[RMDB]
RNA sequence: GGGAACGACUCGAGUAGAGUCGAAAAGAUAUGGAGAUGUGGACAUGCUGUGAUCGGAUCGGAAACGAUCCGCGUACAGCAACAGCCACACCUCCUAAGUCAAAAGUGUUACGUUCGCGUAACACAACUUUAAGCAUCUGUUCGCAGAUGCUUAAAGAAAAGAAACAACAACAACAAC
Reactivity to 2A3 in 0.01 (KOAc 150mM, MgCl2 10mM, bicine 150mM(pH8.5), 24C), signal-to-noise 3, nucleotides 027 to 126: g010a020u060a030u140g000g000a010g000a010u010g010u000g000g010a040c050a190u110g010c000u000g000u010g020a040u070c010g010g000a000u000c000g030g030a060a000a070c010g010a010u000c000c010g000c010g020u030a000c000a000g000c010a010a010c040a010g030c000c000a000c000a000c010c010u000c000c000u030a150a010g060u020c050a010a020a100a120g010u010g010u000u010a040c020g010u030u080c300g010c000g110u000a000a000c010a000c010a010a020
Reactivity to DMS in 0.01 (KOAc 150mM, MgCl2 10mM, bicine 150mM(pH8.5), 24C), signal-to-noise 5, nucleotides 027 to 126: g000a040u000a300u010g000g000a010g020a010u000g000u000g020g000a060c120a200u010g010c010u000g000u000g000a040u000c010g000g000a020u010c010g020g010a140a090a190c000g000a000u000c000c010g020c170g000u000a010c020a020g000c010a010a030c250a170g010c010c000a000c010a000c020c000u010c000c000u000a030a060g010u000c020a060a100a110a120g010u000g000u000u000a000c000g010u000u010c250g020c010g010u000a000a010c010a000c000a070a060